Chemical mapping of a 177-nucleotide RNA with DMS and 2A3. For 2A3, 4,935 sequencing reads were counted. Values cover nucleotides 27 to 126. 2A3 adducts were read by reverse transcription with SuperScript II with manganese. The RNA was probed in 150 mM KOAc, 10 mM MgCl2 and 150 mM bicine (pH 8.5) at 24 C.
RNA sequence: GGGAACGACUCGAGUAGAGUCGAAAACCACCUCCCCAUUUAUUGCAAUUGCUUCGCAAUUGUAAAAAAGGUUAACUAUCCACAUUUGAUACGACUAGUACUUUUUGCCCAUCCAUUUUUGACUCGUUAUACUCAAAUGCUUCGGCAUUUGAGUAUAAAAAGAAACAACAACAACAAC
Reactivity to DMS in 0.01 (KOAc 150mM, MgCl2 10mM, bicine 150mM(pH8.5), 24C), signal-to-noise 2, nucleotides 027 to 126: c030c010a300c050c000u000c030c020c020c030a120u010u020u010a090u030u000g010c000a010a010u010u010g000c020u050u000c240g010c000a030a010u000u000g010u000a010a020a070a070a060a120g010g040u020u010a090a070c110u000a030u000c010c080a080c050a100u010u030u000g000a110u030a040c050g060a040c020u000a070g020u020a060c050u000u000u000u020u020g000c010c000c000a130u000c020c050a070u020u000u020u000u000g000a030c070u000c040g040u000
Reactivity to 2A3 in 0.01 (KOAc 150mM, MgCl2 10mM, bicine 150mM(pH8.5), 24C), signal-to-noise 7, nucleotides 027 to 126: c000c000a030c000c010u050c020c000c010c020a040u040u150u150a120u060u060g010c000a010a010u000u000g000c020u150u240c220g000c020a010a000u000u010g000u050a010a010a010a000a010a000g080g000u090u070a070a040c030u050a050u060c040c030a050c030a120u060u060u140g080a080u090a070c010g030a030c080u030a020g070u070a090c040u050u100u030u050u130g030c010c000c000a030u030c030c010a090u030u020u010u050u120g030a040c000u000c020g020u010